[RMDB]
RNA sequence: GGGAACGACUCGAGUAGAGUCGAAAACGACUUGGUGCCGGUCACGGUGGCGGGCGCGCUGGGACUGCACGACCAGCCGGGCCGCUCCACGACGGACACCGUGCUGCGCUUUCUUGGCGGGCGUCCAAUGACGGCGAAGGUUCGCCUUCGCCGUCAUAAAAGAAACAACAACAACAAC
Reactivity to 2A3 in 0.01 (KOAc 150mM, MgCl2 10mM, bicine 150mM(pH8.5), 24C), signal-to-noise 1, nucleotides 027 to 126: c030g050a030c010u080u190g000g000u000g020c010c050g070g160u160c040a000c050g030g140u160g040g010c010g010g020g010c020g010c010g000c010u000g000g000g080a200c010u090g040c140a040c100g130a070c000c000a000g010c010c000g000g040g030c000c000g000c000u000c040c000a000c050g110a000c000g000g010a070c010a000c010c000g000u030g000c000u100g040c030g010c050u080u020u090c110u140u190g070g000c070g000g000g000c010g040u110c000c070a010